The data come from the RNA Mapping Database (RMDB), library OK2TST. The record gives the reactivity of an RNA of 177 nucleotides to DMS and 2A3. For 2A3, 1,445 sequencing reads were counted. Reactivities are given for positions 27 through 126. For DMS the reverse transcriptase was MarathonRT. The reactions ran in a buffer of 150 mM KOAc, 10 mM MgCl2 and 150 mM bicine (pH 8.5), at 24 C.
[RMDB]
RNA sequence: GGGAACGACUCGAGUAGAGUCGAAAAUCAGGCAACUCGUUACUCAAAGCAAAACGAAGGACUUGCCCGGACAACGAACUCGAAUGCAUUUGAGAAUGAAAUGUUGGCUAAUUCGCUUGAUUUGCGAUCGUCCAUAGUACUUCGGUACUAUGGACGAAAAAGAAACAACAACAACAAC
Reactivity to DMS in 0.01 (KOAc 150mM, MgCl2 10mM, bicine 150mM(pH8.5), 24C), signal-to-noise 2, nucleotides 027 to 126: u020c030a060g000g010c000a030a060c030u000c020g060u000u000a160c010u020c010a020a010a050g010c010a100a030a110a160c030g040a030a030g030g000a270c150u010u000g000c030c090c170g010g010a150c020a030a040c000g000a280a130c050u000c010g020a110a300u010g000c010a140u000u000u000g000a040g000a000a050u000g000a030a060a080u010g020u000u000g000g010c080u010a060a140u020u000c040g000c000u000u020g000a080u010u000u000g000c040g000a100
Reactivity to 2A3 in 0.01 (KOAc 150mM, MgCl2 10mM, bicine 150mM(pH8.5), 24C), signal-to-noise 1, nucleotides 027 to 126: u070c000a020g050g000c000a000a000c030u000c020g020u080u060a270c010u010c050a000a020a020g000c000a000a000a030a140c030g010a010a020g020g000a010c030u000u030g010c000c130c000g140g010a080c020a040a020c040g020a010a000c010u000c010g030a030a010u050g000c190a270u020u030u030g010a000g070a020a000u000g000a030a080a170u120g000u030u000g060g000c040u030a070a080u060u040c020g010c020u020u080g070a110u120u130u140g010c010g010a020